The record gives the reactivity of an RNA of 177 nucleotides to 2A3 and DMS. 2A3 adducts were read by reverse transcription with SuperScript II with manganese. For DMS, 4,393 sequencing reads were counted. It was measured as part of the RMDB library OK2TST. In probing experiments dimethyl sulfate is read out at A N1 and C N3, which are open when not base-paired. Values cover nucleotides 27 to 126.
[RMDB]
RNA sequence: GGGAACGACUCGAGUAGAGUCGAAAAUCACGGAUGCCAAGUGCAUAGAGGAAGCGAGCAAAGGUGGUUUCUUUCGCUUUUUCCAGCGCGUUAACCACGUUUUGUGCCGAUUUUGGCCCCAUACGCAUAGCUAAUGCAUGUUCGCAUGCAUUAGCUAAAAAGAAACAACAACAACAAC
Reactivity to 2A3 in 0.01 (KOAc 150mM, MgCl2 10mM, bicine 150mM(pH8.5), 24C), signal-to-noise 1, nucleotides 027 to 126: u040c020a000c100g120g020a020u050g030c000c040a170a060g000u110g130c030a010u030a050g080a020g080g090a050a010g010c060g000a020g050c050a020a020a010g120g010u010g030g070u050u010u000c040u060u170u030c010g000c000u110u030u010u100u040c060c000a000g000c000g000c000g030u010u000a010a030c010c010a030c020g010u000u000u060u080g040u060g030c000c010g000a020u070u020u050u150g040g010c010c000c000c000a060u100a050c080g000c040a090
Reactivity to DMS in 0.01 (KOAc 150mM, MgCl2 10mM, bicine 150mM(pH8.5), 24C), signal-to-noise 4, nucleotides 027 to 126: u000c040a140c110g020g000a050u000g000c030c040a080a150g010u020g020c050a040u000a090g010a130g010g000a070a060g020c060g000a190g000c050a030a030a060g030g040u000g010g000u000u010u000c070u000u010u000c020g000c020u000u010u010u030u010c100c120a150g000c020g020c300g010u010u000a050a060c030c020a040c010g000u010u010u000u000g010u010g000c050c020g000a130u000u000u010u000g020g010c020c020c010c060a110u010a070c150g020c110a150